[RMDB]
RNA sequence: GGGAACGACUCGAGUAGAGUCGAAAACUCAACUGACAUACAAGGGGAGGUUUCGGCCAAAUGUUUUAUGCAGAAAGCGUGAGGAAGGUAGCACUUAGACACUCACGAGUAGCGGUUCGGCAGUAGUAAAGGUCCUGGCGCUUCGGCGCCAGGACAACAUUCAUGUCAUCUUCGGAUGACAUGAAUGAAAAGAAACAACAACAACAAC
Reactivity to DMS in 0.01 (KOAc 150mM, MgCl2 10mM, bicine 150mM(pH8.5), 24C), signal-to-noise 1, nucleotides 027 to 156: c000u010c010a090a070c050u010g040a110c050a110u000a110c100a050a130g010g000g000g000a060g020g020u000u010u000c000g000g020c040c010a060a050a090u000g010u020u010u000u000a110u000g040c060a130g000a070a050a080g010c040g040u060g000a100g000g010a080a070g010g000u010a090g010c040a060c040u000u010a080g020a120c030a080c010u000c010a140c020g050a110g030u000a030g030c040g050g000u000u000c040g030g020c000a080g000u020a000g020u010a060a100a080g020g020u000c000c000u000g000g010c000g090c000u000u000c240g060g010c010g060c000c000a000g020g040a000c020a010a050
Reactivity to 2A3 in 0.01 (KOAc 150mM, MgCl2 10mM, bicine 150mM(pH8.5), 24C), signal-to-noise 1, nucleotides 027 to 156: c010u030c030a040a050c060u060g030a040c000a130u190a050c030a090a090g000g010g030g040a050g040g000u010u020u090c050g010g000c040c000a030a060a080u040g020u030u110u040u130a100u090g060c060a000g030a070a060a020g030c010g050u010g040a030g040g030a040a010g050g000u070a030g040c030a020c070u050u040a010g040a110c030a020c090u020c000a000c010g020a030g030u030a010g030c030g020g000u030u030c030g030g020c030a010g020u140a000g010u060a040a150a020g090g000u010c000c000u000g020g000c000g030c030u020u050c130g030g000c000g000c000c050a000g010g000a000c000a000a000
Notes:
This 207-nucleotide RNA was probed chemically with DMS and 2A3. Values cover nucleotides 27 to 156. The RNA was probed in 150 mM KOAc, 10 mM MgCl2 and 150 mM bicine (pH 8.5) at 24 C. 2A3 adducts were read by reverse transcription with SuperScript II with manganese. It was measured as part of the RMDB library M2RFPK. For DMS the reverse transcriptase was MarathonRT.